[RMDB]
RNA sequence: GGGAACGACUCGAGUAGAGUCGAAAACUUGACCACUGCCCAUCGCUGCGGUACCGUCGCUGGUAAGGAGUGUAAGAACUCUGGAAACAGCGGUACCCGCACUCGUCAGAUCGCGGUUUUUUUACGCCUGCACGUUUUACGUCGGGAGGGCGGCAGCCGUCCCAAGCAAUUUCGAUUGCUUGGGACGAAAAGAAACAACAACAACAAC
Reactivity to 2A3 in 0.01 (KOAc 150mM, MgCl2 10mM, bicine 150mM(pH8.5), 24C), signal-to-noise 5, nucleotides 027 to 156: c030u110u140g090a050c010c030a070c080u070g020c000c000c000a070u090c070g020c080u050g000c030g070g000u060a130c020c010g140u190c090g020c040u010g020g060u040a020a020g000g000a000g000u020g000u030a060a050g020a070a020c000u000c000u010g020g030a100a240a020c000a010g000c000g000g010u030a040c000c000c020g000c000a010c010u020c010g040u020c020a030g010a150u160c070g000c040g060g030u060u030u020u020u040u150u200a050c030g010c000c020u060g000c110a040c060g020u010u030u060u220a070c080g030u090c030g030g040g010a140g020g020g000c020g030g000c010a010g050c030
Reactivity to DMS in 0.01 (KOAc 150mM, MgCl2 10mM, bicine 150mM(pH8.5), 24C), signal-to-noise 3, nucleotides 027 to 156: c040u000u020g020a120c020c040a060c030u000g040c010c010c010a150u010c040g000c150u010g020c010g020g030u000a010c010c020g020u000c030g030c040u000g000g020u000a240a270g000g010a040g030u010g020u000a200a300g010a150a070c000u000c000u000g000g010a300a170a060c020a040g030c000g010g000u000a000c070c030c020g030c010a060c030u000c040g020u010c040a080g060a080u000c060g010c030g010g020u000u000u000u000u000u000u000a060c020g010c010c020u000g050c050a030c030g010u000u000u000u000a080c070g020u000c000g000g020g010a080g000g020g020c020g010g010c100a120g000c100
Conditions: 150 mM KOAc, 10 mM MgCl2 and 150 mM bicine (pH 8.5), 24 C. Chemical mapping of a 207-nucleotide RNA with 2A3 and DMS. The 2A3 profile rests on 7,924 reads. The data come from the RNA Mapping Database (RMDB), library OK3TST. DMS adducts were read by reverse transcription with MarathonRT.